[RMDB]
RNA sequence: GGGAACGACUCGAGUAGAGUCGAAAAGAAAAGAAAGCUAUCGCAUACUCGAAAGGAUCUCGAACAGCACCAAGAGAUCAGUAUGGUCGAAAGACCGAUAGCGGUGCUGUAAAAAGAAAAAGAAAAAGGGUAUGACAAUGUUCGCAUUGUCAUACCCAAAAGAAACAACAACAACAAC
Reactivity to 2A3 in 0.01 (KOAc 150mM, MgCl2 10mM, bicine 150mM(pH8.5), 24C), signal-to-noise 1, nucleotides 027 to 126: g020a050a050a000a020g270a030a080a000g020c000u000a000u010c000g010c010a010u000a010c000u000c000g040a050a000a000g010g090a110u000c000u000c000g000a050a000c000a000g010c000a000c000c000a020a070g040a000g040a210u060c020a010g020u060a140u300g020g000u000c000g050a060a000a000g010a000c000c030g060a090u040a040g100c020g000g000u000g010c020u010g010u010a010a000a000a000a000g300a040a090a000a000a000g300a060a090a000a000a000
Reactivity to DMS in 0.01 (KOAc 150mM, MgCl2 10mM, bicine 150mM(pH8.5), 24C), signal-to-noise 1, nucleotides 027 to 126: g000a000a080a090a180g040a040a220a030g010c050u000a120u000c000g040c080a080u000a000c000u000c020g000a060a250a170g020g000a080u000c000u000c000g000a200a020c060a000g000c030a000c000c000a090a270g000a260g000a060u000c010a100g000u000a120u000g070g010u000c000g010a170a050a100g010a000c070c000g000a000u000a000g020c160g010g020u000g000c000u000g010u000a000a120a090a000a000g000a060a060a080a180a280g000a010a050a050a010a000

This 177-nucleotide RNA was probed chemically with 2A3 and DMS. For 2A3 the reverse transcriptase was SuperScript II with manganese. Reactivities are given for positions 27 through 126. High 2A3 reactivity points to a flexible backbone, as in loops and unpaired stretches. DMS adducts were read by reverse transcription with MarathonRT. It was measured as part of the RMDB library OK1LIB. The reactions ran in a buffer of 150 mM KOAc, 10 mM MgCl2 and 150 mM bicine (pH 8.5), at 24 C.